[RMDB]
RNA sequence: GGGAACGACUCGAGUAGAGUCGAAAAUAGAAAGGCUAAGCACGUCGCAAUGACGUAAGGUGGGACUUUUCCCUACAGUUCGAGCGGUCGAACUAGAGGGGAGUGUAACCUUGGUACCGCCGUAGAAACUGGAUUACGACGUCUACCCGGGAUUCAACAUACUAUCGCAGUUCGCUGCGAUAGUAUGAAAAGAAACAACAACAACAAC
Reactivity to DMS in 0.01 (KOAc 150mM, MgCl2 10mM, bicine 150mM(pH8.5), 24C), signal-to-noise 3, nucleotides 027 to 156: u000a080g020a030a020a010g040g030c010u000a070a120g020c100a040c020g000u000c030g030c070a170a150u010g010a090c060g020u000a040a070g020g020u000g030g000g010a150c120u020u010u000u000c000c010c000u000a070c080a020g030u000u000c000g000a090g040c300g020g020u000c020g010a030a040c000u000a040g010a120g040g000g010g030a070g040u010g020u000a120a100c000c010u000u000g000g020u000a030c040c080g030c020c040g020u000a050g020a070a060a240c040u000g000g010a150u000u000a290c000g020a040c040g000u000c080u000a110c100c000c010g020g020g030a260u000u020c050a030a200
Reactivity to 2A3 in 0.01 (KOAc 150mM, MgCl2 10mM, bicine 150mM(pH8.5), 24C), signal-to-noise 6, nucleotides 027 to 156: u150a010g010a020a020a000g040g020c020u030a020a010g020c030a000c020g030u040c030g020c130a120a200u230g040a070c030g090u100a030a040g060g010u030g000g040g050a030c020u070u030u060u110c000c000c000u030a100c030a010g000u000u000c010g000a030g030c140g160g190u080c000g000a010a010c020u050a060g030a030g100g020g000g000a020g010u050g040u030a050a060c010c000u010u040g000g010u010a020c010c060g020c030c020g020u010a010g080a030a070a030c030u030g000g010a030u060u080a020c020g000a010c070g060u000c010u010a030c010c010c010g030g030g020a070u120u090c030a040a050